RNA sequence: GGGAACGACUCGAGUAGAGUCGAAAAGAUAUGGAUUCUAGGAGAAUGGUGUCGGAAACGACAUCCAUUCGCGAAACUAGAUCCUAAGUCAAAGUCAUUCCUGGCACUUCGGUGCCAGGAAUGACAACUAAUUUACCAAGUUCGCUUGGUAAAUUAGAAAAGAAACAACAACAACAAC
Reactivity to DMS in 0.01 (KOAc 150mM, MgCl2 10mM, bicine 150mM(pH8.5), 24C), signal-to-noise 3, nucleotides 027 to 126: g000a050u000a300u010g000g010a000u010u010c000u000a010g020g020a150g000a000a000u010g000g020u000g010u000c000g000g000a090a080a270c010g020a010c000a000u010c010c000a010u000u000c010g010c170g010a100a110a200c000u000a000g000a030u000c000c000u010a050a130g010u000c010a080a120a120g000u000c000a010u000u000c000c010u000g010g000c020a000c010u000u010c200g030g000u000g000c020c000a010g000g000a000a000u000g020a010c000a020a090
Reactivity to 2A3 in 0.01 (KOAc 150mM, MgCl2 10mM, bicine 150mM(pH8.5), 24C), signal-to-noise 2, nucleotides 027 to 126: g010a030u060a060u170g020g000a060u300u240c010u010a020g010g030a170g040a070a000u010g020g000u000g010u010c020g020g000a080a050a040c000g020a000c000a060u000c020c000a010u010u000c000g000c020g080a150a090a030c000u000a000g000a010u000c000c000u010a160a030g010u030c060a130a040a070g010u000c000a010u020u010c000c000u020g030g070c030a020c000u060u100c300g120g000u020g020c010c010a000g000g020a000a000u010g000a010c000a000a000

This 177-nucleotide RNA was probed chemically with DMS and 2A3. Conditions: 150 mM KOAc, 10 mM MgCl2 and 150 mM bicine (pH 8.5), 24 C. Source: RMDB library TTRDEL, as collected in RNAgym.